[RMDB]
An RNA of 177 nucleotides, treated with DMS and 2A3 and read out base by base. 2A3 adducts were read by reverse transcription with SuperScript II with manganese. It was measured as part of the RMDB library OK2TST. High 2A3 reactivity points to a flexible backbone, as in loops and unpaired stretches. The DMS profile rests on 2,947 reads.
RNA sequence: GGGAACGACUCGAGUAGAGUCGAAAAGACCAGCUUGGGAUUCACCUGAUCAAGAAAGCGGUUCACGGAGCCAGGAAGGUCGUAGGGCAGAUAAACGUGGUGAACAUCUUUGCCAAAAGCGGACUGAGUACUACUAUCCGUUCGCGGAUAGUAGUACAAAAGAAACAACAACAACAAC
Reactivity to DMS in 0.01 (KOAc 150mM, MgCl2 10mM, bicine 150mM(pH8.5), 24C), signal-to-noise 3, nucleotides 027 to 126: g020a100c030c020a070g020c050u000u000g000g000g000a140u010u010c090a100c070c020u000g000a070u010c090a060a080g000a060a080a100g010c100g020g030u000u000c100a060c110g000g000a110g020c060c020a060g010g010a110a060g000g000u000c040g000u000a050g000g020g020c040a030g000a060u000a040a060a070c140g020u010g010g020u000g010a060a070c120a060u000c100u000u000u000g030c020c030a030a020a090a110g010c050g000g000a070c050u000g010a210
Reactivity to 2A3 in 0.01 (KOAc 150mM, MgCl2 10mM, bicine 150mM(pH8.5), 24C), signal-to-noise 2, nucleotides 027 to 126: g030a050c020c000a010g020c030u050u070g060g010g060a120u050u070c030a070c040c020u040g050a100u100c020a010a060g070a180a080a000g090c050g000g040u030u020c030a010c110g070g000a020g030c020c000a030g060g040a080a000g050g000u020c030g030u110a090g030g030g000c020a010g030a080u130a060a110a020c060g060u060g040g020u040g040a010a030c020a060u010c030u080u090u090g000c000c010a060a100a040a010g070c040g010g030a010c010u020g030a000